Conditions: 150 mM KOAc, 10 mM MgCl2 and 150 mM bicine (pH 8.5), 24 C. An RNA of 207 nucleotides, treated with 2A3 and DMS and read out base by base. It was measured as part of the RMDB library M2RFPK. The DMS profile rests on 1,724 reads. The 2A3 profile rests on 2,855 reads.
RNA sequence: GGGAACGACUCGAGUAGAGUCGAAAAAGAUCGAUUACGAUCGAUCAAUGAUGCCCCUCACCCACCUCUGAAGAUCCCAGGUGGGCGAGGGAACGGAGCACGGGAUCACGAGCAGUACGUUGCUCGAAAAAGAACUAGACCUUCGGGUCUAGUUCAACCAUUCCUUUCUCUUCGGAGAAAGGAAUGGAAAAGAAACAACAACAACAAC
Reactivity to 2A3 in 0.01 (KOAc 150mM, MgCl2 10mM, bicine 150mM(pH8.5), 24C), signal-to-noise 4, nucleotides 027 to 156: a000g000a010u000c000g000a010u050u060a080c160g050a010u000c000g010a000u000c010a000a070u180g080a040u200g100c020c000c020c000u000c000a020c000c000c010a010c010c020u040c040u100g070a110a040g040a030u020c000c010c000a000g020g000u000g000g000g020c000g000a000g000g000g020a020a030c120g100g090a090g060c140a110c150g000g000g000a010u020c030a000c030g000a010g000c010a010g020u230a120c100g130u180u030g000c000u000c000g020a010a000a000a000a000g000a000a000c000u000a000g010a000c010c010u020u120c290g060g000g000u000c000u000a000g000u000u000c000a010a000
Reactivity to DMS in 0.01 (KOAc 150mM, MgCl2 10mM, bicine 150mM(pH8.5), 24C), signal-to-noise 1, nucleotides 027 to 156: a120g050a000u010c020g010a060u020u000a040c260g080a140u000c010g000a000u000c010a300a060u000g000a090u020g000c020c000c000c000u000c000a090c010c010c000a020c010c090u000c000u030g010a190a100g000a090u000c000c000c000a010g020g040u000g060g020g010c010g010a060g010g020g020a000a020c140g000g020a220g050c130a090c050g040g000g010a070u000c020a090c050g000a080g050c010a060g000u020a120c210g020u000u000g020c000u000c040g020a020a100a160a120a220g000a010a000c000u000a000g000a020c000c000u000u010c300g020g010g030u000c000u000a000g020u000u000c010a020a130